[RMDB]
RNA sequence: GGGAACGACUCGAGUAGAGUCGAAAAUUAAACCGUUUAAUUGUUUGCCAGAACACAUCGCUAUGGAUGAAUUUAAAAGCGUUAAAAAUGUAACUGGAUCAAUGAGUUUCAUUUUUAUAGAUAAUGACUCACAUUAUUGUUUCGACAAUAAUGUGAGAAAAGAAACAACAACAACAAC
Reactivity to DMS in 0.01 (KOAc 150mM, MgCl2 10mM, bicine 150mM(pH8.5), 24C), signal-to-noise 4, nucleotides 027 to 126: u000u000a080a110a220c140c050g010u010u010u000a090a090u000u000g010u010u000u000g040c040c040a120g020a090a090c120a080c070a040u010c040g020c080u010a070u000g020g010a080u000g000a120a070u010u000u000a060a070a110a080g000c050g000u000u000a000a030a000a020a010u000g000u000a010a040c010u010g030g010a150u010c290a050a090u010g010a050g020u000u000u000c000a010u000u000u000u000u000a030u020a160g000a100u010a030a050u010g010a220
Reactivity to 2A3 in 0.01 (KOAc 150mM, MgCl2 10mM, bicine 150mM(pH8.5), 24C), signal-to-noise 2, nucleotides 027 to 126: u040u040a070a040a000c040c010g040u040u090u100a160a050u040u060g050u090u060u060g040c000c020a060g040a090a010c040a000c000a080u040c060g040c040u110a040u150g020g040a060u100g210a130a190u090u090u280a040a170a030a000g000c010g040u010u060a020a070a000a020a070u020g000u050a020a000c000u020g110g050a040u180c020a050a120u180g030a030g060u020u020u000c010a000u000u000u010u050u230a150u030a060g060a090u110a210a100u170g010a020
Annotation
This 177-nucleotide RNA was probed chemically with DMS and 2A3. Conditions: 150 mM KOAc, 10 mM MgCl2 and 150 mM bicine (pH 8.5), 24 C. Source: RMDB library OK2TRN, as collected in RNAgym. Reactivities are given for positions 27 through 126.